[RMDB]
RNA sequence: GGGAACGACUCGAGUAGAGUCGAAAACCCAGUGGGCACCGCAGCCGAACUGGGACAUCGGGCCGGUGCACUGGCACCCCGGGGAGUCGACGUGGAAAUUGCCUGGAAUCCGGAAUUCCUGCGCGAGUGACAGCAGGUAGUUCGCUACCUGCUGUCAAAAAGAAACAACAACAACAAC
Reactivity to DMS in 0.01 (KOAc 150mM, MgCl2 10mM, bicine 150mM(pH8.5), 24C), signal-to-noise 2, nucleotides 027 to 126: c170c000c000a090g000u010g020g000g030c050a060c070c030g020c130a200g000c040c000g000a060a040c060u030g000g020g010a080c130a050u000c010g000g000g000c190c050g000g050u000g000c080a050c040u010g030g020c070a160c070c000c020c060g040g040g010g050a020g000u040c000g000a110c020g000u050g000g020a030a080a030u020u000g000c010c000u000g010g000a080a040u020c060c050g000g030a060a090u020u000c000c000u000g000c220g050c020g000a110g000
Reactivity to 2A3 in 0.01 (KOAc 150mM, MgCl2 10mM, bicine 150mM(pH8.5), 24C), signal-to-noise 2, nucleotides 027 to 126: c000c000c000a000g100u000g060g040g000c020a010c020c130g030c050a090g080c030c010g070a050a020c060u110g030g020g090a040c020a130u040c080g000g020g020c090c060g030g000u030g000c020a030c090u040g040g000c010a060c000c040c000c010g000g010g000g040a020g060u070c010g000a110c010g050u030g000g020a060a020a070u160u070g020c010c020u040g000g050a050a040u000c030c050g060g040a090a060u040u000c040c000u040g010c050g020c060g030a040g100